[RMDB]
RNA sequence: GGGAACGACUCGAGUAGAGUCGAAAAGGUGGCGUGCAACGGUUGCGGGCCGAGGCGGCCGCCGCCGAGCUGUUCGCCGAGCAGGAUCAGUUGGUGCGACGCGUCGUUGUCCCGGCGGUGGCAACGAGGUACCUAUGACUUUCGAGUCAUAGGUACCAAAAGAAACAACAACAACAAC
Reactivity to 2A3 in 0.01 (KOAc 150mM, MgCl2 10mM, bicine 150mM(pH8.5), 24C), signal-to-noise 4, nucleotides 027 to 126: g070g020u060g030g050c190g070u060g010c030a070a040c060g060g060u110u110g030c060g000g100g000c010c020g020a060g010g070c030g020g010c000c000g000c000c000g000c000c000g000a010g010c020u030g040u180u090c030g010c030c010g000a010g000c030a030g010g110a090u130c030a030g160u190u180g130g040u120g040c030g020a020c010g020c010g070u090c040g050u110u080g080u090c010c010c000g000g020c030g020g000u010g010g000c010a000a010c030g030a040
Reactivity to DMS in 0.01 (KOAc 150mM, MgCl2 10mM, bicine 150mM(pH8.5), 24C), signal-to-noise 5, nucleotides 027 to 126: g010g030u010g010g020c040g030u000g010c030a080a110c100g000g000u000u000g020c080g010g000g010c040c030g000a070g010g010c090g000g000c020c010g010c010c010g010c010c010g000a090g020c020u000g010u010u000c030g020c020c020g000a290g020c030a070g010g000a110u000c100a110g000u020u010g020g020u000g010c030g010a250c280g000c070g020u000c060g010u000u000g000u010c010c010c010g010g010c040g000g010u000g010g000c020a040a030c100g010a130